Conditions: 150 mM KOAc, 10 mM MgCl2 and 150 mM bicine (pH 8.5), 24 C. Chemical mapping of a 177-nucleotide RNA with DMS and 2A3. For DMS, 1,871 sequencing reads were counted. For DMS the reverse transcriptase was MarathonRT.
RNA sequence: GGGAACGACUCGAGUAGAGUCGAAAAAUAAGCCUCAGGGACCCGCACGGAGGGGAAGAACUGAGGAUUUCCGAAUGGGAAUCCCCACCGCAAUUGCUUCGCGCAAUGGGGAACGCCGAGAAUUGAAUCAAAGGACCUUUUUCGAAAGGUCCUUUGAAAAAGAAACAACAACAACAAC
Reactivity to DMS in 0.01 (KOAc 150mM, MgCl2 10mM, bicine 150mM(pH8.5), 24C), signal-to-noise 2, nucleotides 027 to 126: a070u010a100a050g000c000c000u000c010a010g000g020g000a080c010c000c000g060c130a180c130g050g020a300g060g010g000g020a130a200g000a210a190c000u000g000a050g000g030a030u000u000u010c030c000g000a220a050u030g040g000g010a080a080u000c000c000c000c000a040c080c030g000c300a190a110u000u000g020c050u010u020c160g000c060g000c020a050a000u010g030g000g000g000a030a070c270g010c000c010g010a120g000a040a130u050u070g000a170a110
Reactivity to 2A3 in 0.01 (KOAc 150mM, MgCl2 10mM, bicine 150mM(pH8.5), 24C), signal-to-noise 1, nucleotides 027 to 126: a020u110a050a050g110c000c000u000c000a000g060g000g020a030c010c010c010g140c040a090c190g000g110a010g110g000g000g010a090a060g030a080a000c000u000g000a010g000g000a000u000u010u020c000c000g080a060a160u110g100g000g010a030a070u010c010c000c010c000a090c250c000g020c040a050a050u250u110g150c060u100u170c160g020c030g000c080a060a050u000g000g000g010g000a010a020c060g010c020c000g000a010g080a080a200u250u160g010a000a060